Notes
The data come from the RNA Mapping Database (RMDB), library M2PK90. The record gives the reactivity of an RNA of 177 nucleotides to DMS and 2A3. Reactivities are given for positions 27 through 126. Values are in units of 0.01, from 0 to 300, in steps of 10. The 2A3 profile rests on 2,282 reads. 2A3 is a SHAPE reagent: it acylates the 2'-hydroxyl of flexible nucleotides of all four kinds. The reactions ran in a buffer of 150 mM KOAc, 10 mM MgCl2 and 150 mM bicine (pH 8.5), at 24 C.
[RMDB]
RNA sequence: GGGAACGACUCGAGUAGAGUCGAAAAGACGAACGAAAACACAAAUGUUCCACGGUGCAGAAGGGUCCCUCACAUGAGGAUCACCCAUGUAACUCGGACAGGAUAUGCUAUUGGGAAAAAGAGAGAACUGAUGGUCUUAUUUCGAUAAGACCAUCAGAAAAGAAACAACAACAACAAC
Reactivity to DMS in 0.01 (KOAc 150mM, MgCl2 10mM, bicine 150mM(pH8.5), 24C), signal-to-noise 3, nucleotides 027 to 126: g010a120c120g000a080a100c050g010a030a040a100a060c080a050c110a050a140a110u010g010u010u010c010c040a080c110g000g000u000g000c020a070g000a100a110g010g020g000u000c120c000c020u010c010a160c230a110u040g000a030g000g010a050u010c110a020c010c020c020a110u000g000u000a030a040c020u000c120g000g000a040c030a020g000g010a150u030a060u000g010c040u000a060u010u000g010g000g010a030a040a040a040a090g010a110g010a120g010a070a150
Reactivity to 2A3 in 0.01 (KOAc 150mM, MgCl2 10mM, bicine 150mM(pH8.5), 24C), signal-to-noise 3, nucleotides 027 to 126: g040a000c050g030a120a000c020g050a040a060a120a000c110a000c020a040a150a060u100g010u130u060c000c000a020c030g030g000u020g000c000a000g010a300a150g070g000g000u020c020c010c000u030c010a220c030a220u300g010a030g000g010a040u120c060a020c020c000c000a000u010g000u040a070a030c000u020c060g000g000a000c010a000g040g020a060u050a050u300g030c020u050a070u170u150g000g000g070a010a020a010a000a010g060a020g020a010g020a090a030